[RMDB]
RNA sequence: GGGAACGACUCGAGUAGAGUCGAAAAAGCGCGCAAUGUGUACAUGGGUAUUCCCCCAUAUCUGUGUACUAUAGCUGAGAGGACUUUUUUUUUGGGGUGUGCAGUGCAAGUGUAUUUGGUGCGCGAAGUGUAUAUAAAUUUUCGAAUUUAUAUACACAAAAGAAACAACAACAACAAC
Reactivity to DMS in 0.01 (KOAc 150mM, MgCl2 10mM, bicine 150mM(pH8.5), 24C), signal-to-noise 5, nucleotides 027 to 126: a150g010c020g020c020g020c020a090a040u010g010u010g000u000a010c000a000u000g000g000g000u000a010u010u030c060c000c010c020c080a300u000a000u000c000u000g000u000g010u000a000c000u010a110u010a160g000c010u010g000a140g010a100g000g000a060c020u010u000u000u000u010u020u010u020u010g010g000g010g000u010g010u020g000c020a030g000u010g010c070a060a060g010u010g010u020a050u020u000u010g000g010u000g010c010g010c010g000a040a110
Reactivity to 2A3 in 0.01 (KOAc 150mM, MgCl2 10mM, bicine 150mM(pH8.5), 24C), signal-to-noise 7, nucleotides 027 to 126: a000g040c040g000c000g000c030a050a100u110g050u020g000u070a000c000a000u000g000g000g000u000a010u060u130c010c000c000c000c000a010u000a010u000c010u000g010u000g000u000a010c010u070a020u080a040g000c030u060g030a030g020a020g120g030a060c030u080u060u010u010u010u000u010u100u140g060g010g010g020u090g050u050g020c040a030g030u020g050c020a070a140g060u060g040u140a130u050u100u100g050g010u030g000c010g000c010g020a060a020

Structure probing data (DMS and 2A3) for a 177-nucleotide construct.
For DMS the reverse transcriptase was MarathonRT.
For 2A3 the reverse transcriptase was SuperScript II with manganese.
It was measured as part of the RMDB library OK1LIB.